[RMDB]
RNA sequence: GGGAACGACUCGAGUAGAGUCGAAAAAGCGAGAGUAGGGCUAAUAUACCCCCUAAAGCGAAUAAAUAACGCCAAGCAAACGCGCUGAUUUGCUCAUGCGUGUAAAUGUUUUCAACGAUAAAGAGCGCGUAUGUGUACCCUUCGGGGUACACAUACGAAAAGAAACAACAACAACAAC
Reactivity to DMS in 0.01 (KOAc 150mM, MgCl2 10mM, bicine 150mM(pH8.5), 24C), signal-to-noise 2, nucleotides 027 to 126: a140g000c080g010a070g020a070g050u010a020g010g000g020c060u020a100a080u020a170u000a180c100c080c000c060c010u010a030a110a160g030c030g020a050a080u000a090a120a060u000a090a020c020g030c030c220a100a120g000c010a000a010a040c040g020c040g000c040u000g000a150u000u000u010g010c080u000c070a090u050g020c040g010u000g010u010a040a120a040u010g000u000u010u000u000c080a100a080c140g010a080u010a090a020a040g000a070g040c030g000

This 177-nucleotide RNA was probed chemically with DMS. Source: RMDB library OK2TST, as collected in RNAgym.